[RMDB]
RNA sequence: GGGAACGACUCGAGUAGAGUCGAAAAAAUGGCAUGUGUUCCUGUCGACGUCAUCUUACUCUUUACUUCUGUGAGUGAGAUUUCCGAUGUCCAAACAGGGUGAUUGUUUCCCUCAAAUGCAUGCCAGCGUACUGUGAGAGUUCGCUCUCACAGUACGAAAAGAAACAACAACAACAAC
Reactivity to 2A3 in 0.01 (KOAc 150mM, MgCl2 10mM, bicine 150mM(pH8.5), 24C), signal-to-noise 3, nucleotides 027 to 126: a000a000u070g020g000c000a000u000g000u000g040u040u120c000c000u000g000u010c020g000a000c010g020u000c010a010u000c000u010u000a010c000u010c000u080u140u090a150c070u210u190c120u240g190u050g050a010g010u020g000a000g000a020u070u050u000c060c040g010a000u010g000u000c010c000a030a110a010c000a010g010g010g010u090g080a250u050u080g040u030u010u000c000c000c000u050c020a080a070a010u120g000c000a000u000g020c000c000a000g030
Reactivity to DMS in 0.01 (KOAc 150mM, MgCl2 10mM, bicine 150mM(pH8.5), 24C), signal-to-noise 3, nucleotides 027 to 126: a080a060u010g010g010c000a000u000g010u000g030u010u010c010c000u000g010u000c120g000a030c000g010u000c010a090u000c010u000u000a010c000u010c000u010u010u020a110c240u030u000c250u010g030u000g000a010g000u000g000a010g010a030u000u020u010c280c160g000a020u010g010u000c000c080a120a080a160c010a000g000g010g020u020g010a110u000u000g000u000u000u000c000c020c000u010c040a040a040a060u010g010c000a000u010g000c010c000a050g000
Source: RMDB library RFMREP, as collected in RNAgym. This 177-nucleotide RNA was probed chemically with 2A3 and DMS. DMS adducts were read by reverse transcription with MarathonRT. For DMS, 2,824 sequencing reads were counted. For 2A3, 3,387 sequencing reads were counted. Reactivities are given for positions 27 through 126. The RNA was probed in 150 mM KOAc, 10 mM MgCl2 and 150 mM bicine (pH 8.5) at 24 C.